[RMDB]
RNA sequence: GGGAACGACUCGAGUAGAGUCGAAAAGAUAUGGAUCUGAUCACCACAGGGUCCGGGAGAACACGCGAGAGUCGGAAACGACUCUCGUUCGAAGAACGGACCCUGUGGUGAGUCAGAUCCUAAGUCACUGUUUAUGUACGUUCGCGUACAUAAACAGAAAAGAAACAACAACAACAAC
Reactivity to DMS in 0.01 (KOAc 150mM, MgCl2 10mM, bicine 150mM(pH8.5), 24C), signal-to-noise 2, nucleotides 027 to 126: g030a040u010a300u010g020g000a000u020c010u000g020a080u000c000a000c010c000a020c000a040g020g020g000u000c000c010g040g000g010a300g000a090a110c090a150c210g020c060g000a010g050a010g000u010c000g060g000a080a100a300c000g000a010c000u000c000u000c010g000u000u000c180g000a090a060g030a300a260c020g000g010a020c000c020c000u000g000u000g000g000u000g000a000g010u010c000a040g020a000u000c000c000u010a020a060g010u000c040a300